Source information
An RNA of 177 nucleotides, treated with 2A3 and DMS and read out base by base. Conditions: 150 mM KOAc, 10 mM MgCl2 and 150 mM bicine (pH 8.5), 24 C. It was measured as part of the RMDB library M2PK50.
RNA sequence: GGGAACGACUCGAGUAGAGUCGAAAAACGAUGUCGUUCGCGACAUCGUAAAUUGAAUAACCUUGCUUGAAGUCUACUUGGUUGUAAAGCGAGACAAGUCAGUGAGAGUCCUAUUCGUAGGACUCAAGCUUAAUUCAGCUUUCGAGCUGAAUUAAGCAAAAGAAACAACAACAACAAC
Reactivity to 2A3 in 0.01 (KOAc 150mM, MgCl2 10mM, bicine 150mM(pH8.5), 24C), signal-to-noise 2, nucleotides 027 to 126: a000c010g010a000u000g000u000c020g000u010u040c170g010c010g050a000c010a000u000c010g000u010a000a010a010u100u070g040a000a040u060a050a030c020c020u000u060g000c000u010u030g040a080a000g020u060c010u020a120c150u300u260g070g010u070u070g070u040a030a020a020g040c000g010a010g020a010c020a100a180g030u060c050a020g040u030g140a140g010a000g110u040c000c000u020a010u030u040c250g030u030a000g010g000a000c000u000c010a000a010
Reactivity to DMS in 0.01 (KOAc 150mM, MgCl2 10mM, bicine 150mM(pH8.5), 24C), signal-to-noise 2, nucleotides 027 to 126: a030c010g030a010u010g010u000c000g060u000u000c230g010c010g030a020c000a000u000c010g010u000a010a090a050u000u010g000a070a060u020a090a130c130c010u000u000g000c000u000u010g000a100a230g000u010c010u000a080c070u010u000g020g040u000u010g010u000a030a000a010g000c010g000a040g010a130c110a060a110g010u000c060a010g000u000g000a250g000a030g000u000c010c000u010a010u000u020c210g020u010a010g010g000a010c000u000c000a020a080